[RMDB]
RNA sequence: GGGAACGACUCGAGUAGAGUCGAAAAGAUAUGGAUGUAAUGGAGCUAAUGGGACGAAUUCGGAAACGAACUAUCCCGAUAGCGUUGAAAUUACAUCCUAAGUCAAACUCGCAGUUCGCUGCGAGAAUCACUAAUAGCCGUUCGCGGCUAUUAGUGAAAAAGAAACAACAACAACAAC
Reactivity to 2A3 in 0.01 (KOAc 150mM, MgCl2 10mM, bicine 150mM(pH8.5), 24C), signal-to-noise 2, nucleotides 027 to 126: g030a020u020a030u100g000g000a010u010g010u030a010a000u010g000g000a020g010c030u040a080a170u130g000g010g010a050c120g170a160a270u040u020c000g020g000a080a000a000c000g000a010a000c040u020a070u040c000c010c010g020a070u030a010g000c040g050u190u020g030a010a000a010u020u010a000c000a010u000c000c000u010a050a010g040u000c000a000a100a100c000u040c000g000c020a000g010u090u100c200g060c120u000g000c000g010a000g020a010a100
Reactivity to DMS in 0.01 (KOAc 150mM, MgCl2 10mM, bicine 150mM(pH8.5), 24C), signal-to-noise 2, nucleotides 027 to 126: g010a040u010a260u000g000g000a000u010g030u000a000a000u000g000g000a090g030c000u020a010a180u000g020g000g010a000c110g000a040a200u000u020c000g000g000a080a030a130c000g010a010a060c130u010a280u000c000c000c000g020a120u010a000g010c000g020u000u010g020a090a050a010u000u000a000c000a000u000c000c000u000a010a050g000u010c030a080a110a090c010u000c010g000c000a000g010u000u000c280g040c000u000g000c000g000a000g000a070a060